[RMDB]
RNA sequence: GGGAACGACUCGAGUAGAGUCGAAAACAUCUCAAGCAGGCGUUGAGGGUAACCCAGGCUUGUCUUUAUAUUGCAGUACAAAAUUCGCAGUGCGAGGUUUAACACAAGUAGCCGCACAAGAUUUAGCCCCUCGGUGAAAUUUCGAUUUCACCGAGGGAAAAGAAACAACAACAACAAC
Reactivity to DMS in 0.01 (KOAc 150mM, MgCl2 10mM, bicine 150mM(pH8.5), 24C), signal-to-noise 1, nucleotides 027 to 126: c090a080u060c000u000c030a050a000g020c000a030g000g000c140g000u070u000g010a130g000g000g000u080a030a130c030c020c020a080g000g000c010u000u000g020u030c100u000u000u000a060u010a200u070u020g010c060a070g080u030a100c290a060a030a130a110u040u000c060g000c030a240g000u000g000c010g000a040g000g000u050u000u000a050a160c070a050c190a010a140g000u020a140g030c000c000g030c040a020c010a110a120g010a100u000u000u000a080g000c140
Reactivity to 2A3 in 0.01 (KOAc 150mM, MgCl2 10mM, bicine 150mM(pH8.5), 24C), signal-to-noise 3, nucleotides 027 to 126: c030a050u030c000u000c050a060a080g000c050a000g030g030c120g120u070u090g030a160g040g040g010u080a130a100c000c000c000a030g020g000c000u030u070g030u140c010u000u220u060a140u090a110u020u110g070c040a030g050u120a220c070a130a130a110a150u170u160c010g010c110a010g090u020g000c000g050a080g040g020u100u150u150a060a010c050a020c000a120a160g080u100a000g090c000c000g050c020a000c010a090a000g010a090u100u090u090a020g020c000